[RMDB]
RNA sequence: GGGAACGACUCGAGUAGAGUCGAAAAGCCAUCUUAAACUAUGCUCUUCGGUCUUCAAGCCUGUCAUACUGACUCGUCUUGAGCGAAAAUAAGUCUGUAACCCGCAAUGUGUGCGAAUUAUGGCAAAAGGUAAUAGCAAUUUCGAUUGCUAUUACCUAAAAGAAACAACAACAACAAC
Reactivity to DMS in 0.01 (KOAc 150mM, MgCl2 10mM, bicine 150mM(pH8.5), 24C), signal-to-noise 6, nucleotides 027 to 126: g010c020c020a040u010c080u010u000a100a080a090c070u000a040u000g010c040u000c040u000u000c030g020g010u010c060u010u010c040a040a070g020c020c020u020g000u000c020a110u010a160c230u010g000a030c020u000c050g000u020c010u000u010g010a030g010c030g000a040a060a090a080u000a060a050g010u000c020u010g000u020a060a150c040c020c000g020c080a100a080u010g020u010g000u010g010c010g000a090a080u020u010a040u000g000g000c050a060a060a110
Reactivity to 2A3 in 0.01 (KOAc 150mM, MgCl2 10mM, bicine 150mM(pH8.5), 24C), signal-to-noise 9, nucleotides 027 to 126: g020c010c000a040u030c060u080u170a060a060a030c040u040a040u170g010c010u010c010u050u030c020g060g060u030c030u090u060c060a020a010g010c010c010u020g010u020c010a060u100a300c090u140g020a010c000u010c050g130u040c020u020u040g010a020g000c010g030a000a010a010a030u150a050a020g030u010c050u060g050u050a080a080c010c000c020g010c040a070a110u160g080u030g020u030g140c010g030a060a080u170u040a050u090g030g000c000a020a050a030
Conditions: 150 mM KOAc, 10 mM MgCl2 and 150 mM bicine (pH 8.5), 24 C. Chemical mapping of a 177-nucleotide RNA with DMS and 2A3. For 2A3 the reverse transcriptase was SuperScript II with manganese. For DMS the reverse transcriptase was MarathonRT.